Conditions: 150 mM KOAc, 10 mM MgCl2 and 150 mM bicine (pH 8.5), 24 C. The record gives the reactivity of an RNA of 177 nucleotides to 2A3 and DMS. For DMS the reverse transcriptase was MarathonRT. 2A3 adducts were read by reverse transcription with SuperScript II with manganese.

[RMDB]
RNA sequence: GGGAACGACUCGAGUAGAGUCGAAAAACGAAGACCAGCCGGACAGCAGCAUGCAGCUGAUUGUCUUGCAUGCACUCGUCGCGAGCGCGACGAUUCGGGGCCUUCCGAGUCCGAACGCGUCGCCUGCCUGAUCCAGGCUCUUCGGAGCCUGGAUCAGAAAAGAAACAACAACAACAAC
Reactivity to 2A3 in 0.01 (KOAc 150mM, MgCl2 10mM, bicine 150mM(pH8.5), 24C), signal-to-noise 2, nucleotides 027 to 126: a000c040g070a050a000g050a080c000c020a000g030c000c040g020g000a020c000a020g000c000a000g000c000a030u050g000c010a000g000c040u060g090a300u120u160g150u090c010u040u060g000c000a000u040g000c000a050c100u020c080g130u060c070g000c040g150a060g050c170g000c000g030a010c020g010a000u000u010c000g080g090g000g050c000c070u250u150c050c050g040a000g040u000c020c000g000a030a030c190g000c010g100u010c000g000c000c000u070g000c030
Reactivity to DMS in 0.01 (KOAc 150mM, MgCl2 10mM, bicine 150mM(pH8.5), 24C), signal-to-noise 1, nucleotides 027 to 126: a050c210g080a030a040g040a170c040c190a090g050c030c060g000g000a020c000a040g000c000a300g000c050a030u040g030c000a220g020c000u000g000a280u060u000g020u000c120u000u000g010c030a030u000g050c040a050c210u000c050g010u000c040g030c010g010a190g030c040g000c010g000a270c200g000a170u010u060c000g000g000g000g000c200c150u030u000c040c010g010a000g060u090c000c000g020a160a000c100g000c090g010u030c000g000c080c200u000g040c140